[RMDB]
RNA sequence: GGGAACGACUCGAGUAGAGUCGAAAAGAGAGUUGGUGUUGUACACUGAUUGCUAACCAGUGUACAACAUAGUCCUAAACGUGACAGCUACGACACCUGUCACGUGAGACUGCUCGUUAUGCAUUGGUUAGCAAACAAUGCGUGACAAUCUGUUGCAAGUCCAACUUCCAAGCGACAGAGAGUAGUCUCCGUUAUUGCGUGUUGUAAGCAGUAGCGUUAGGACUAUGCUAGUACCUGGAAGUUGGACUUGUACUAGCACCAACUCUAGAUCUCAGUUCGCUGAGGUCAAAAGAAACAACAACAACAAC
Reactivity to 2A3 in 0.01 (KOAc 150mM, MgCl2 10mM, bicine 150mM(pH8.5), 24C), signal-to-noise 9, nucleotides 027 to 266: g170a000g000a000g000u000u000g000g000u020g010u050u090g020u050a050c010a000c020u040g010a120u050u100g050c050u050a030a010c010c000a000g000u010g000u020a000c010a010a000c010a000u030a000g000u010c000c020u100a160a100a010c000g000u000g010a000c000a020g020c050u200a080c120g190a020c040a030c040c000u000g000u010c010a000c000g010u030g000a070g000a000c010u010g030c050u080c120g000u010u010a010u060g000c010a000u000u010g010g010u050u060a040g060c020a020a020a010c030a020a070u150g060c050g030u020g020a010c020a040a110u060c060u090g090u100u030g040c000a020a000g010u020c010c000a010a010c010u030u020c020c010a090a020g090c050g070a010c020a030g080a000g010a010g040u010a000g000u000c020u010c040c000g010u010u000a000u010u040g050c080g040u130g140u200u260g160u190a150a040g010c000a000g000u010a000g000c010g020u030u120a020g000g000a000c000u010a000u010g000c000u020a030g010u060a120c000c010u000g000g010a030a020g010u010u020g010g010a000c000u000u000g000u000a000c000u000a000g000c000a000c000c000a000a000c000u000c000u000a000
Reactivity to DMS in 0.01 (KOAc 150mM, MgCl2 10mM, bicine 150mM(pH8.5), 24C), signal-to-noise 9, nucleotides 027 to 266: g010a040g010a020g010u000u000g000g010u000g010u000u000g010u000a050c000a040c060u010g000a100u000u000g000c030u000a030a040c060c000a010g020u000g000u000a020c040a000a010c010a040u010a010g000u000c000c150u010a080a100a030c000g020u000g000a010c020a010g010c120u010a110c180g010a110c190a100c300c010u000g000u000c010a000c000g000u000g000a140g000a020c010u000g010c300u010c150g010u000u000a080u000g000c000a000u000u000g000g000u000u000a030g000c060a020a040a040c020a040a040u010g010c100g010u000g010a030c020a140a120u020c160u010g010u010u000g000c000a020a030g000u000c000c000a000a010c010u000u000c010c010a030a060g010c130g010a060c050a050g010a070g000a140g010u000a010g000u000c000u000c300c010g010u000u000a010u000u000g010c010g000u010g010u010u020g010u010a100a150g000c000a010g010u000a010g000c000g000u010u020a080g000g000a020c000u000a010u010g000c020u000a090g010u000a090c070c070u000g000g000a010a010g000u000u000g000g000a010c000u000u000g000u000a000c020u000a060g000c050a020c010c000a000a010c000u000c000u000a040
Chemical mapping of a 307-nucleotide RNA with 2A3 and DMS. The data come from the RNA Mapping Database (RMDB), library POS240. DMS adducts were read by reverse transcription with MarathonRT. For 2A3 the reverse transcriptase was SuperScript II with manganese. Conditions: 150 mM KOAc, 10 mM MgCl2 and 150 mM bicine (pH 8.5), 24 C.